[RMDB]
RNA sequence: GGGAACGACUCGAGUAGAGUCGAAAACAGCAAUUAUUCGUAAUUGCUGAAUGGCGGACCCAGCGCGGAAGGAGCGCGCAGGACUCCUUCGCCGCCUAUUAAUAAGCAGGUACUUCGGUACCUGCAAAUUCUUACAGGAAUUCGUUCCUGUAAGAAUAAAAGAAACAACAACAACAAC
Reactivity to 2A3 in 0.01 (KOAc 150mM, MgCl2 10mM, bicine 150mM(pH8.5), 24C), signal-to-noise 5, nucleotides 027 to 126: c000a000g000c000a010a010u010u020a010u070u140c150g040u050a010a010u000u010g000c000u010g000a020a070u120g000g000c010g010g010a030c000c000c030a070g090c170g000c080g140g020a030a030g030g010a020g050c060g000c040g000c090a020g040g130a130c010u020c010c000u040u020c020g000c010c010g000c000c010u060a120u160u180a140a200u140a150a040g000c010a000g010g000u010a000c000u030u100c180g070g000u000a010c020c000u000g000c000a000a000
Reactivity to DMS in 0.01 (KOAc 150mM, MgCl2 10mM, bicine 150mM(pH8.5), 24C), signal-to-noise 6, nucleotides 027 to 126: c010a000g000c000a010a000u000u000a020u000u010c190g020u000a010a000u000u000g010c000u010g000a030a080u010g010g030c000g010g000a150c040c010c010a140g020c170g020c090g020g010a040a020g000g000a020g010c060g020c190g000c180a080g000g000a160c020u000c020c010u000u000c010g020c010c010g000c010c010u000a070u010u010a080a100u000a090a120g000c000a010g000g000u000a000c000u000u010c160g020g010u000a000c000c000u000g000c000a000a030
This 177-nucleotide RNA was probed chemically with 2A3 and DMS. Reactivities are rounded to 0.1 and cut off at 0 and 3. For 2A3 the reverse transcriptase was SuperScript II with manganese. It was measured as part of the RMDB library M2PK50. For DMS, 9,060 sequencing reads were counted. For 2A3, 9,734 sequencing reads were counted. For DMS the reverse transcriptase was MarathonRT.